An RNA of 207 nucleotides, treated with 2A3 and read out base by base. Values cover nucleotides 27 to 156.

[RMDB]
RNA sequence: GGGAACGACUCGAGUAGAGUCGAAAAACUAAGUGCUUGGAGAGCUUCCACACAUUAGACAUGAAACCGGACACUGUGAGAAUUGAUUGGCCCACAGGGAGAAGAGAGAAGAAAUCAUUCUUAACAGCCCUAGUCAGUCAGUGCUGAUCUUAGGCCAUACUACCCUAGCGUUCGCGCUAGGGUAGUAAAAAGAAACAACAACAACAAC
Reactivity to 2A3 in 0.01 (KOAc 150mM, MgCl2 10mM, bicine 150mM(pH8.5), 24C), signal-to-noise 1, nucleotides 027 to 156: a000c010u000a000a010g020u010g070c070u060u060g020g020a070g010a050g140c000u180u050c010c010a000c000a010c000a140u080u060a010g070a060c130a160u170g030a040a210a020c110c000g060g010a000c050a000c050u070g020u050g100a080g080a090a060u110u080g060a070u170u030g060g000c050c060c050a150c110a110g040g060g000a050g000a100a030g070a020g020a030g000a050a060g000a050a160a000u090c040a040u040u110c030u060u040a110a090c030a080g000c000c000c010u020a000g000u000c020a000g000u000c120a100g010u080g080c020u000g000a020u030c080u020u050a000g010g010c000c010a020
It was measured as part of the RMDB library OK3TST. The RNA was probed in 150 mM KOAc, 10 mM MgCl2 and 150 mM bicine (pH 8.5) at 24 C.